[RMDB]
RNA sequence: GGGAACGACUCGAGUAGAGUCGAAAAUCAUGCUUUUCUGAUCGGAUUUCCUCUGCGAGGGGAUAUUUCAUAUAACCUCCCAUGGUCCAAACUGAUUGCGAGAUCCAUCCCCGAAAAGGACCAGUGAGAUAAAUUUAUUAUUCGUAAUAAAUUUAUCAAAAGAAACAACAACAACAAC
Reactivity to DMS in 0.01 (KOAc 150mM, MgCl2 10mM, bicine 150mM(pH8.5), 24C), signal-to-noise 4, nucleotides 027 to 126: u020c060a070u020g010c040u010u010u000u010c010u010g010a100u010c130g020g000a090u000u040u010c000c020u000c070u000g000c280g010a070g010g000g000g010a030u000a010u010u040u020c100a060u010a030u010a050a070c040c030u000c010c060c020a080u010g020g010u000c000c010a060a090a130c130u000g010a070u000u020g030c080g010a090g000a020u000c040c100a100u010c010c000c000c050g010a050a050a080a090g000g000a020c030c020a060g020u020g010a190
Reactivity to 2A3 in 0.01 (KOAc 150mM, MgCl2 10mM, bicine 150mM(pH8.5), 24C), signal-to-noise 8, nucleotides 027 to 126: u060c020a030u110g050c030u090u160u110u060c050u060g080a120u090c070g030g030a040u060u060u040c010c010u030c030u060g080c070g060a060g000g020g000g010a010u020a040u050u160u070c070a020u100a020u020a160a060c020c020u020c020c020c010a080u100g020g000u010c020c000a090a090a070c070u080g040a110u050u110g020c050g020a040g010a050u000c040c010a040u010c000c000c000c000g050a070a100a020a020g020g010a000c010c010a040g050u050g090a090